Source: RMDB library RFM100, as collected in RNAgym. An RNA of 177 nucleotides, treated with 2A3 and DMS and read out base by base. Conditions: 150 mM KOAc, 10 mM MgCl2 and 150 mM bicine (pH 8.5), 24 C. For DMS, 1,059 sequencing reads were counted. For DMS the reverse transcriptase was MarathonRT.
RNA sequence: GGGAACGACUCGAGUAGAGUCGAAAAUUCCGAGACGCAACGGUCGCCGACGAUAAAAUCGUAUCGAUUGAAAUCAGCGGCUCGGGGCCAUGGGAGGAUACCGGAGAUCGAUAUGACGGCAGCAGUGCCGUGAGCCAGACUUCGGUCUGGCUCACGGAAAAGAAACAACAACAACAAC
Reactivity to 2A3 in 0.01 (KOAc 150mM, MgCl2 10mM, bicine 150mM(pH8.5), 24C), signal-to-noise 1, nucleotides 027 to 126: u070u000c030c000g050a000g000a000c030g000c000a060a030c050g060g010u020c020g000c040c010g100a020c000g000a000u040a150a180a010a150u010c060g000u070a130u030c010g030a040u060u200g100a100a100a070u150c050a110g030c000g000g000c000u000c000g000g000g000g000c000c000a060u120g000g000g000a040g030g000a010u010a050c020c020g000g040a010g000a030u030c070g060a010u020a060u000g110a050c020g010g100c000a030g000c040a040g070u060g000
Reactivity to DMS in 0.01 (KOAc 150mM, MgCl2 10mM, bicine 150mM(pH8.5), 24C), signal-to-noise 1, nucleotides 027 to 126: u020u000c000c000g000a090g030a020c110g060c060a200a210c100g000g000u000c100g000c010c100g020a040c080g000a060u030a060a020a050a300u000c000g000u000a110u070c000g000a030u000u000g000a000a130a090u020c190a020g000c180g010g020c000u040c070g000g000g020g020c010c080a010u000g000g000g080a200g000g020a140u010a060c060c040g050g000a030g000a060u000c070g010a080u000a130u020g000a060c000g000g000c000a030g000c060a090g000u000g000